Structure probing data (DMS and 2A3) for a 177-nucleotide construct. High 2A3 reactivity points to a flexible backbone, as in loops and unpaired stretches. 2A3 adducts were read by reverse transcription with SuperScript II with manganese. DMS adducts were read by reverse transcription with MarathonRT. The RNA was probed in 150 mM KOAc, 10 mM MgCl2 and 150 mM bicine (pH 8.5) at 24 C. For 2A3, 2,461 sequencing reads were counted. The DMS profile rests on 2,233 reads.
[RMDB]
RNA sequence: GGGAACGACUCGAGUAGAGUCGAAAACAGACGCAAGCCGCCGACGAGACGCGCCGGACGCCACGCGGGACGCCGCGCUUCGGGGAGCUGAAGCUGCUCAUCAGCCUGUAUCUCAUGGGCGACGACGCGCUUAUGCGUGAUUCGUCACGCAUAAGCGAAAAGAAACAACAACAACAAC
Reactivity to DMS in 0.01 (KOAc 150mM, MgCl2 10mM, bicine 150mM(pH8.5), 24C), signal-to-noise 2, nucleotides 027 to 126: c050a080g000a090c110g030c060a150a110g040c030c030g000c010c030g030a110c050g010a070g000a080c060g000c050g010c120c000g010g000a090c060g000c050c080a100c150g020c050g020g020g030a090c140g010c100c040g000c060g000c060u000u000c010g000g000g000g000a120g010c020u000g010a070a110g010c030u010g000c060u000c080a120u010c040a110g010c010c000u000g000u000a070u000c050u000c040a060u020g020g000g000c000g010a050c010g000a070c100g000
Reactivity to 2A3 in 0.01 (KOAc 150mM, MgCl2 10mM, bicine 150mM(pH8.5), 24C), signal-to-noise 2, nucleotides 027 to 126: c000a010g110a040c060g030c100a000a040g020c010c030g020c010c020g050a110c050g030a030g040a060c040g030c020g000c030c000g050g030a040c040g070c050c000a070c080g050c030g010g020g060a040c050g030c050c010g010c000g010c020u020u050c030g040g010g020g010a030g000c040u030g030a030a010g000c020u070g030c030u000c060a130u030c010a010g030c000c010u090g040u100a170u090c030u000c040a030u110g040g000g000c000g040a050c060g030a020c040g020